Source: RMDB library M2PK90, as collected in RNAgym. An RNA of 177 nucleotides, treated with DMS and 2A3 and read out base by base. The 2A3 profile rests on 822 reads.
[RMDB]
RNA sequence: GGGAACGACUCGAGUAGAGUCGAAAAAUUUCGAGCGUAAUCGCGUCUUGACUAGACUGUAGGUGACGUGAGUAGGGAUCUAUCCCAGUGUCCAUAGCGCACAAUACGCUGAUCUACAGUCAUUUAAAUCCGGGAGUUUAUUCGUAAACUCCCGGAUAAAAGAAACAACAACAACAAC
Reactivity to DMS in 0.01 (KOAc 150mM, MgCl2 10mM, bicine 150mM(pH8.5), 24C), signal-to-noise 1, nucleotides 027 to 126: a130u010u000u000c040g000a050g010c030g020u000a130a080u000c150g000c020g040u010c000u020u000g020a110c300u010a060g010a020c010u010g010u000a000g030g010u000g040a020c070g040u010g030a110g010u000a110g000g000g020a010u000c210u000a130u010c000c000c030a160g040u000g000u000c040c040a170u000a060g000c100g050c100a050c120a110a080u000a050c020g000c020u000g000a020u000c000u000a010c000a000g000u000c010a060u000u000u000a040a040
Reactivity to 2A3 in 0.01 (KOAc 150mM, MgCl2 10mM, bicine 150mM(pH8.5), 24C), signal-to-noise 1, nucleotides 027 to 126: a060u170u210u100c010g020a010g000c020g040u090a140a100u060c000g000c030g070u030c050u030u120g050a020c020u050a060g000a020c000u000g000u000a000g000g060u020g000a020c000g020u080g050a010g020u170a110g070g000g020a070u020c060u260a170u080c120c000c010a020g000u010g020u080c050c130a190u140a140g010c000g020c100a000c000a030a010u120a060c010g020c010u020g050a020u010c000u010a000c010a000g040u000c000a000u010u050u020a060a100